[RMDB]
RNA sequence: GGGAACGACUCGAGUAGAGUCGAAAAGAUUACAGUCUUUGUUACUGUCAACCUUGCAAAAGUUUGCACUUAUGCCAUCUUUGCUUACUCACCACAGCUUACACUUGUGUUUCCGGAAGUGAAGAUGCCUCGAUUAUAUCUUCGGAUAUAAUCGAGGAAAAGAAACAACAACAACAAC
Reactivity to 2A3 in 0.01 (KOAc 150mM, MgCl2 10mM, bicine 150mM(pH8.5), 24C), signal-to-noise 4, nucleotides 027 to 126: g030a000u160u100a010c000a010g010u010c040u110u300u290g090u120u090a010c000u000g010u020c030a050a040c020c010u020u050g010c020a010a030a100a190g050u080u110u140g040c040a020c030u130u060a070u220g040c010c010a000u000c010u000u010u020g000c020u020u030a120c010u030c060a030c000c010a010c010a020g030c020u170u130a020c060a010c050u070u110g030u010g000u060u080u030c040c000g000g040a000a020g010u010g020a010a000g000a010u010g010
Reactivity to DMS in 0.01 (KOAc 150mM, MgCl2 10mM, bicine 150mM(pH8.5), 24C), signal-to-noise 2, nucleotides 027 to 126: g010a090u000u010a010c020a020g000u010c040u030u000u010g000u010u000a010c000u000g010u010c140a030a070c000c030u000u000g040c050a050a060a120a130g030u000u000u010g030c090a060c150u030u010a090u000g000c070c010a010u000c000u000u000u000g000c010u000u000a070c050u000c080a070c300c010a010c010a030g000c060u000u000a120c300a080c180u000u000g020u000g010u010u010u010c050c110g000g000a040a010g010u000g000a010a040g000a030u000g020
Source: RMDB library 15KREP, as collected in RNAgym. An RNA of 177 nucleotides, treated with 2A3 and DMS and read out base by base. Values cover nucleotides 27 to 126. The DMS profile rests on 1,814 reads. The reactions ran in a buffer of 150 mM KOAc, 10 mM MgCl2 and 150 mM bicine (pH 8.5), at 24 C. For 2A3 the reverse transcriptase was SuperScript II with manganese. The 2A3 profile rests on 3,454 reads.